The data come from the RNA Mapping Database (RMDB), library M2RFOK. An RNA of 207 nucleotides, treated with DMS and 2A3 and read out base by base. Reactivities are given for positions 27 through 156.

RNA sequence: GGGAACGACUCGAGUAGAGUCGAAAACAUUCUUGAAAAAGUGAUGUAGAUUUAUAGCCCAUAACUUUUGUGAAUUACAUCGACGAUACGGCGUCGAAAGAAAAAUAAAUAGACCGUAUGAAAGAAAAAAACAACAGUAGCUUCGGCUACUGUUGAACGUACUAUUAAAGUUCGCUUUAAUAGUACGAAAAGAAACAACAACAACAAC
Reactivity to DMS in 0.01 (KOAc 150mM, MgCl2 10mM, bicine 150mM(pH8.5), 24C), signal-to-noise 1, nucleotides 027 to 156: c010a160u000u000c010u000u030g020a140a040a090a090a080g000u000g000a040u000g000u000a030g000a150u010u010u000a160u020a200g030c000c010c170a110u010a110a010c010u000u000u000u010g030u000g030a060a070u010u010a070c030a030u010c010g010a070c020g000a070u000a000c000g000g040c000g000u010c040g020a040a040a100g020a000a070a080a110a180u000a000a030a170u000a050g030a080c010c000g010u000a010u000g000a290a030a150g000a000a020a070a140a140a070a200c000a000a020c000a040g040u000a010g020c010u020u010c300g030g000c000u000a030c000u000g020u020u000g000a000a100
Reactivity to 2A3 in 0.01 (KOAc 150mM, MgCl2 10mM, bicine 150mM(pH8.5), 24C), signal-to-noise 3, nucleotides 027 to 156: c000a010u030u000c010u050u080g030a050a050a040a020a020g050u070g030a020u020g050u030a090g040a170u050u190u120a160u160a090g050c010c010c040a050u110a120a110c130u080u120u210u170g170u090g120a140a100u160u050a070c010a050u020c000g000a010c000g000a000u000a000c000g000g000c000g000u000c000g000a000a050a020g040a010a060a000a020a010u100a000a040a000u030a020g090a040c010c000g010u010a030u020g010a010a090a080g050a000a140a040a010a000a000a010c010a000a000c000a000g000u000a000g020c000u030u050c230g060g020c000u000a000c000u010g000u000u000g000a000a000
Source information:
The reactions ran in a buffer of 150 mM KOAc, 10 mM MgCl2 and 150 mM bicine (pH 8.5), at 24 C. As a SHAPE reagent, 2A3 marks flexible, mostly unpaired nucleotides at the ribose 2'-OH. The 2A3 profile rests on 2,050 reads.